[RMDB]
RNA sequence: GGGAACGACUCGAGUAGAGUCGAAAAAUGACAGCGGAGCGACCCGCGUCGGCGCUCUCAUCUAGCGGCACCAGCAGCGUCUGGUCAAAGCAGAAGCUGUCGCCGAAGCUGCUGGGAAGCAGACGGCCGUCCCGACGUGGUUCGCCACGUCGGGACGAAAAGAAACAACAACAACAAC
Reactivity to 2A3 in 0.01 (KOAc 150mM, MgCl2 10mM, bicine 150mM(pH8.5), 24C), signal-to-noise 1, nucleotides 027 to 126: a000u120g050a020c030a020g000c040g000g010a070g040c000g080a300c020c010c040g050c020g020u070c060g090g000c030g000c000u010c000u080c030a170u050c000u070a090g120c000g010g000c050a020c020c010a020g080c010a070g070c000g070u170c100u220g000g010u100c050a060a000a000g030c040a060g090a260a030g080c000u000g000u150c000g020c000c000g040a000a000g020c000u000g010c000u000g000g000g000a000a000g000c010a000g010a020c030g030g020c020